[RMDB]
RNA sequence: GGGAACGACUCGAGUAGAGUCGAAAAUGGGAUUCAGACUGAGCAUGGUUUUGAGUUUACAAAAGGGCUGUCUACUUCUCACAUGGAAUUCACGGAACCCAGCAUGUCUAUGCUCAACACUCCGCAUACAUAAAACUGUGCAAAGGAGUUUGCGUCGAGCGAACUAUAACUUCGGUUAUAGUUCGCUAAAAGAAACAACAACAACAAC
Reactivity to 2A3 in 0.01 (KOAc 150mM, MgCl2 10mM, bicine 150mM(pH8.5), 24C), signal-to-noise 3, nucleotides 027 to 156: u100g000g000g030a030u050u050c050a050g020a060c030u040g020a000g000c030a040u030g010g090u040u030u060u160g080a100g020u080u150u100a130c070a040a090a000a000g060g000g010c040u060g060u100c040u060a080c030u100u040c010u000c010a060c020a020u070g060g040a020a040u100u060c050a030c160g050g020a030a060c020c010c010a010g030c030a010u060g040u010c030u120a060u050g000c000u000c040a050a030c010a020c070u010c000c000g000c030a020u050a100c000a010u150a130a100a030a050c050u050g000u010g040c010a050a150a230g000g010a020g000u030u090u040g070c050g030u050c060g020
Reactivity to DMS in 0.01 (KOAc 150mM, MgCl2 10mM, bicine 150mM(pH8.5), 24C), signal-to-noise 2, nucleotides 027 to 156: u000g000g030g010a110u000u000c020a120g010a150c080u010g010a150g050c050a090u000g010g010u000u020u000u010g020a110g040u000u010u010a240c070a050a040a070a090g030g000g060c030u000g020u000c010u000a070c020u000u000c010u010c080a090c100a120u000g000g000a070a140u010u000c050a120c020g020g000a080a150c040c010c010a170g010c080a080u000g010u000c070u000a060u010g010c040u010c000a060a050c090a040c030u000c020c020g020c030a100u000a020c080a050u000a040a060a100a130c110u000g030u000g030c000a080a090a060g020g000a060g000u000u000u000g010c090g000u000c010g000